Chemical mapping of a 177-nucleotide RNA with 2A3.
RNA sequence: GGGAACGACUCGAGUAGAGUCGAAAACUAAUGCUUAUAUGCGCACUACACAUACUGAUAUUGGUGUCUACAUUAGUAUGUCACUUGUAUUAGUCAUUGUAGUGAAGAGAUUGUACAACCCAUCACUCUACGUUAGAGACUUCGGUCUCUAACGUAGAAAAGAAACAACAACAACAAC
Reactivity to 2A3 in 0.01 (KOAc 150mM, MgCl2 10mM, bicine 150mM(pH8.5), 24C), signal-to-noise 1, nucleotides 027 to 126: c040u050a060a070u130g020c040u140u150a150u100a040u300g060c030g000c020a010c010u010a020c000a000c000a010u070a020c000u000g010a010u000a010u010u010g020g000u000g030u000c000u000a010c010a080u170u050a090g010u010a020u300g010u020c000a000c000u000u000g000u020a000u030u010a010g000u000c050a040u010u010g040u000a010g000u000g000a000a030g080a000g000a020u080u140g010u090a050c020a060a140c030c000c000a000u060c010a000c040u030
Values cover nucleotides 27 to 126. The RNA was probed in 150 mM KOAc, 10 mM MgCl2 and 150 mM bicine (pH 8.5) at 24 C. For 2A3, 957 sequencing reads were counted. 2A3 adducts were read by reverse transcription with SuperScript II with manganese. The data come from the RNA Mapping Database (RMDB), library 15KREP.